[RMDB]
RNA sequence: GGGAACGACUCGAGUAGAGUCGAAAAACAGGAUAUGAUACGUCAUAUCCUGAUCCGUCUGAAAGACAUGGGUAGUGAGAUGUUCUCACGCUAUCGCGUCUCACUAUCUUGUCUUUCAUCCGGCGAACUGCUAUCCCAUUUUCGAAUGGGAUAGCAGAAAAGAAACAACAACAACAAC
Reactivity to DMS in 0.01 (KOAc 150mM, MgCl2 10mM, bicine 150mM(pH8.5), 24C), signal-to-noise 2, nucleotides 027 to 126: a160c010a010g000g000a010u000a000u000g000a030u000a090c170g050u000c000a010u010a000u000c000c010u010g000a010u000c000c000g020u000c160u000g020a020a010a000g000a000c000a020u010g000g010g000u000a000g000u020g010a010g010a070u010g000u010u000c040u000c040a070c060g010c060u010a090u010c130g010c000g010u000c000u000c000a000c010u000a000u000c000u000u000g010u000c010u000u020u000c000a010u000c090c040g000g020c210g000a130a160
Reactivity to 2A3 in 0.01 (KOAc 150mM, MgCl2 10mM, bicine 150mM(pH8.5), 24C), signal-to-noise 6, nucleotides 027 to 126: a000c000a000g010g000a000u000a000u000g030a010u030a040c230g070u000c010a000u000a000u000c000c000u000g000a010u030c000c000g010u000c020u020g010a000a000a000g000a000c010a050u190g030g000g000u000a010g010u000g010a010g000a010u030g080u200u040c120u060c100a090c070g060c040u140a120u270c110g000c000g010u000c010u000c000a000c000u000a000u000c010u010u000g000u000c000u000u000u000c000a000u000c010c030g020g000c040g050a090a050

The record gives the reactivity of an RNA of 177 nucleotides to DMS and 2A3. High DMS reactivity at an A or C suggests that its Watson-Crick edge is free. For 2A3 the reverse transcriptase was SuperScript II with manganese. Values are in units of 0.01, from 0 to 300, in steps of 10. As a SHAPE reagent, 2A3 marks flexible, mostly unpaired nucleotides at the ribose 2'-OH. The reactions ran in a buffer of 150 mM KOAc, 10 mM MgCl2 and 150 mM bicine (pH 8.5), at 24 C.